[RMDB]
RNA sequence: GGGAACGACUCGAGUAGAGUCGAAAAAGUGAGACGUUAAAAAAACUUCCACUGGCAAAACGCAGGCCAACAGUAACACUCCAGAGACAGAUUAGAAGUAAAGUAUAUUUUGAAGGAAGGGUUACAGUAGUUCACGUAGUUUCGACUACGUGAACUAAAAAGAAACAACAACAACAAC
Reactivity to DMS in 0.01 (KOAc 150mM, MgCl2 10mM, bicine 150mM(pH8.5), 24C), signal-to-noise 4, nucleotides 027 to 126: a050g010u030g000a110g000a030c060g010u000u010a000a000a060a080a090a030a010c030u030u000c010c000a020c030u000g020g020c070a080a070a090a050c110g010c010a090g000g020c030c050a080a080c130a060g000u020a030a030c000a040c010u000c010c010a080g040a180g000a080c130a080g030a050u030u020a070g020a060a100g020u010a050a050a130g010u030a050u030a070u020u010u010u000g010a080a080g000g010a060a030g010g000g010u030u000a040c030a070g000
Reactivity to 2A3 in 0.01 (KOAc 150mM, MgCl2 10mM, bicine 150mM(pH8.5), 24C), signal-to-noise 4, nucleotides 027 to 126: a010g050u030g010a130g000a020c030g000u060u050a040a190a030a010a030a030a010c030u050u000c010c020a040c060u040g040g000c020a070a080a040a020c060g020c020a030g090g000c010c000a050a020c040a120g070u030a010a010c020a000c020u000c000c000a040g010a010g050a120c020a030g040a090u110u200a080g070a220a020g060u160a110a030a000g050u010a050u020a040u180u080u090u040g030a040a010g000g020a020a030g000g000g000u000u000a010c000a030g090